The record gives the reactivity of an RNA of 177 nucleotides to 2A3 and DMS. The RNA was probed in 150 mM KOAc, 10 mM MgCl2 and 150 mM bicine (pH 8.5) at 24 C. The data come from the RNA Mapping Database (RMDB), library OK2TST. For 2A3, 13,794 sequencing reads were counted.

RNA sequence: GGGAACGACUCGAGUAGAGUCGAAAAGAACAGAUCAGACAAACGCAAAUCGAUAUGCAGGAGGAAGCCCAAUCCGGCGGCGGCGGUGGCUUCUCCGUUGAUUCGCUGUCGCUCGGUGGUAUUCCGACCUAAUAUGGGAGUUCGCUCCCAUAUUAGGAAAAGAAACAACAACAACAAC
Reactivity to 2A3 in 0.01 (KOAc 150mM, MgCl2 10mM, bicine 150mM(pH8.5), 24C), signal-to-noise 7, nucleotides 027 to 126: g040a040a020c040a030g060a110u090c030a020g100a130c070a050a140a020c080g010c050a040a060a070u100c050g060a040u050a040u210g040c030a020g010g120a030g010g020a030a020g010c000c010c020a010a080u060c010c000g010g000c000g010g000c010g010g000c000g020g020u030g020g020c000u130u040c060u090c090c020g010u030u080g090a060u100u080c000g000c010u010g000u020c010g020c100u080c050g040g000u020g000g020u040a260u030u020c010c010g010a020
Reactivity to DMS in 0.01 (KOAc 150mM, MgCl2 10mM, bicine 150mM(pH8.5), 24C), signal-to-noise 8, nucleotides 027 to 126: g010a110a100c080a080g010a060u000c060a080g020a080c090a050a080a090c150g010c070a030a070a080u000c100g000a090u010a040u000g020c050a090g010g010a150g010g010a050a060g010c030c010c110a070a080u010c010c020g010g010c040g010g010c010g000g020c020g010g030u000g010g010c050u000u010c080u010c080c090g000u000u000g000a070u010u010c020g010c010u000g020u000c020g010c010u010c040g010g010u000g000g010u000a090u010u000c010c010g000a280